[RMDB]
RNA sequence: GGGAACGACUCGAGUAGAGUCGAAAAUCUUGCACCUUCGGGUGCAAGAAAAUGUAAGCGCAUGCGAGCGCACAGCGCACCCUGAAAAACUGCGCAAAAGAAAAACUCAGCACUUCGGUGCUGAGAACUUACCGAUAUUCUUCGGAAUAUCGGUAAGAAAAGAAACAACAACAACAAC
Reactivity to DMS in 0.01 (KOAc 150mM, MgCl2 10mM, bicine 150mM(pH8.5), 24C), signal-to-noise 2, nucleotides 027 to 126: u000c000u000u000g020c010a000c000c000u000u000c220g010g030g010u000g000c000a010a000g000a010a000a030a020u000g010u020a070a100g010c020g010c010a080u020g010c130g000a130g030c030g020c010a090c050a040g010c020g030c000a100c000c020c000u000g010a040a090a020a070a100c200u000g020c010g040c020a160a090a090a130g000a030a050a120a150a110c000u000c000a010g010c000a000c000u000u010c180g050g000u000g000c000u000g000a000g000a010a060
Reactivity to 2A3 in 0.01 (KOAc 150mM, MgCl2 10mM, bicine 150mM(pH8.5), 24C), signal-to-noise 2, nucleotides 027 to 126: u010c000u010u010g010c010a000c010c000u020u050c230g150g000g000u000g000c000a000a000g010a010a000a000a000u060g010u040a180a070g010c000g010c050a040u150g100c090g100a060g020c030g020c010a040c020a040g010c000g000c000a050c000c010c000u020g030a070a000a010a010a030c100u040g000c030g000c010a060a050a030a060g080a010a110a020a010a020c000u000c000a010g000c010a010c020u020u090c210g080g000u000g000c010u000g010a000g000a000a000

This 177-nucleotide RNA was probed chemically with DMS and 2A3. It was measured as part of the RMDB library M2PK50. The DMS profile rests on 1,813 reads. 2A3 adducts were read by reverse transcription with SuperScript II with manganese. DMS adducts were read by reverse transcription with MarathonRT. The reactions ran in a buffer of 150 mM KOAc, 10 mM MgCl2 and 150 mM bicine (pH 8.5), at 24 C.